[RMDB]
RNA sequence: GGGAACGACUCGAGUAGAGUCGAAAAAUUCGCAGACUAUUACGACCCUGAUUUUAUGGGUUUUUCAGCUUUGCGAGUCAUUAAUGAAGAUGUUAUCGAUGCUGGUCAGGGUUUUGGUACUCACCCAUAAUGGCAUCAUAUUCGUAUGAUGCCAUUAAAAAGAAACAACAACAACAAC
Reactivity to DMS in 0.01 (KOAc 150mM, MgCl2 10mM, bicine 150mM(pH8.5), 24C), signal-to-noise 6, nucleotides 027 to 126: a070u010u000c020g020c030a040g010a030c030u000a060u000u010a070c260g010a020c000c000c000u000g000a160u010u010u010u010a070u010g010g000g010u000u000u000u010u000c110a020g010c130u000u000u000g020c010g010a030g000u000c060a070u010u010a080a100u010g000a110a110g010a080u000g010u000u010a060u010c030g000a070u000g000c030u000g010g010u000c040a070g000g000g010u000u010u000u000g010g020u000a050c130u010c080a130c020c010c020a160
Reactivity to 2A3 in 0.01 (KOAc 150mM, MgCl2 10mM, bicine 150mM(pH8.5), 24C), signal-to-noise 4, nucleotides 027 to 126: a000u060u050c020g040c010a010g010a050c030u030a040u200u090a050c070g010a010c010c010c030u030g090a160u020u060u110u280a100u120g010g020g000u010u010u030u040u060c010a000g000c050u070u070u060g010c000g010a010g010u020c020a050u050u210a130a110u190g090a060a060g060a050u110g030u160u050a070u110c040g010a030u060g020c030u030g000g060u030c020a030g020g030g000u010u040u070u030g040g010u050a050c010u000c060a030c000c000c000a000

Chemical mapping of a 177-nucleotide RNA with DMS and 2A3. For DMS the reverse transcriptase was MarathonRT. In probing experiments dimethyl sulfate is read out at A N1 and C N3, which are open when not base-paired. Conditions: 150 mM KOAc, 10 mM MgCl2 and 150 mM bicine (pH 8.5), 24 C.